Conditions: 150 mM KOAc, 10 mM MgCl2 and 150 mM bicine (pH 8.5), 24 C. Chemical mapping of a 177-nucleotide RNA with DMS and 2A3.
[RMDB]
RNA sequence: GGGAACGACUCGAGUAGAGUCGAAAAGGCGCUGUAUGUCAUCGGCCAGUACUGCGACCAGUCAGUGCCGGACGGCUUUGGCGGCACGGAGCCGCGCAUCACCUGUAAUGCGUACCUGACCACACAGGCUCGUACUCCCAUUCGUGGGAGUACGAGCAAAAGAAACAACAACAACAAC
Reactivity to DMS in 0.01 (KOAc 150mM, MgCl2 10mM, bicine 150mM(pH8.5), 24C), signal-to-noise 1, nucleotides 027 to 126: g000g000c020g000c030u000g000u000a040u010g000u000c010a110u000c030g020g020c020c020a060g060u010a010c200u000g000c140g010a230c300c130a020g010u010c000a240g010u000g030c030c030g020g000a050c030g000g000c240u000u010u000g000g000c050g010g010c030a080c030g060g010a170g000c030c000g010c000g000c020a030u000c000a100c040c000u020g000u000a090a100u000g000c010g040u000a070c050c000u000g000a090c020c060a140c130a070c100a100g000
Reactivity to 2A3 in 0.01 (KOAc 150mM, MgCl2 10mM, bicine 150mM(pH8.5), 24C), signal-to-noise 1, nucleotides 027 to 126: g040g020c020g000c020u050g100u220a040u170g080u040c020a080u080c010g000g000c020c000a020g020u090a030c000u000g050c010g190a190c090c020a020g080u140c010a080g020u040g010c000c000g000g000a010c020g040g010c000u060u050u090g030g000c000g010g000c050a030c050g060g030a000g020c000c000g040c000g000c040a030u010c020a010c010c010u120g090u130a090a000u040g000c000g000u000a110c010c000u020g020a120c030c000a040c040a000c020a010g000
DMS adducts were read by reverse transcription with MarathonRT. Reactivities are rounded to 0.1 and cut off at 0 and 3.